[RMDB]
RNA sequence: GGGAACGACUCGAGUAGAGUCGAAAAGAUAUGGAUCGGGCAGGACAUGACGAUGGGUCGGAAACGACCCUGCCGUCAACAGCCUGAUCCGAUCCUAAGUCAAAACGUUGCUGUUCGCAGCAACGAAUCGACUUGUAGUGUUCGCACUACAAGUCGAAAAAGAAACAACAACAACAAC
Reactivity to 2A3 in 0.01 (KOAc 150mM, MgCl2 10mM, bicine 150mM(pH8.5), 24C), signal-to-noise 2, nucleotides 027 to 126: g000a000u040a010u080g000g010a010u020c000g020g000g040c010a010g000g010a080c200a300u300g010a020c020g020a030u030g000g000g000u030c000g000g000a020a030a000c020g020a000c010c000c000u010g020c030c000g010u000c050a080a070c050a120g080c000c000u020g000a060u060c000c000g010a000u000c000c000u000a050a000g010u020c000a000a010a080a210c020g010u010u000g000c020u040g120u180u120c300g030c170a010g000c000a000a000c000g000a020a160